[RMDB]
RNA sequence: GGGAACGACUCGAGUAGAGUCGAAAAAACUCUUUAAUGUGGUUGCGGCGGCCUGCUUUGGUAGUGGCUUCAUCAACCAUAACCGCAAUCGCUGGCUCCAUGUCAACGGUGCAAAUCCCUGUUUCACUUUCGAAGAAUUGGGAGGUUGCGCGUUGGCCUUGCCUAUAAGCUUCGGCUUAUAGGCAAGAAAAGAAACAACAACAACAAC
Reactivity to DMS in 0.01 (KOAc 150mM, MgCl2 10mM, bicine 150mM(pH8.5), 24C), signal-to-noise 1, nucleotides 027 to 156: a040a060c030u010c030u000u000u000a050a040u010g020u020g000g030u000u000g000c020g020g050c030g020g010c010c000u010g030c100u000u020u010g040g040u010a190g060u000g020g040c000u000u000c210a120u000c080a040a020c000c000a030u010a110a060c020c000g010c030a030a040u000c080g040c010u010g000g040c000u060c070c030a060u000g020u000c010a000a010c000g050g000u010g040c020a030a060a110u000c020c000c000u010g030u020u000u020c060a140c160u000u040u000c190g000a120a080g000a060a040u000u010g000g000g020a050g010g030u000u000g020c000g000c040g060u000u010g010g020c010
Reactivity to 2A3 in 0.01 (KOAc 150mM, MgCl2 10mM, bicine 150mM(pH8.5), 24C), signal-to-noise 3, nucleotides 027 to 156: a000a000c180u200c090u110u180u050a180a090u180g000u010g020g030u070u040g000c010g020g000c010g010g010c050c020u070g070c050u190u170u080g070g020u060a080g020u030g060g000c000u060u040c090a200u190c020a060a080c010c010a020u040a010a030c010c010g000c030a020a040u000c020g010c010u000g110g000c020u050c040c020a050u020g010u030c010a020a000c030g140g050u140g000c000a000a000a000u000c020c020c000u000g090u030u060u070c070a100c170u090u300u300c240g170a210a070g040a130a130u150u020g040g000g000a020g120g050u040u000g020c010g010c000g000u000u000g000g010c000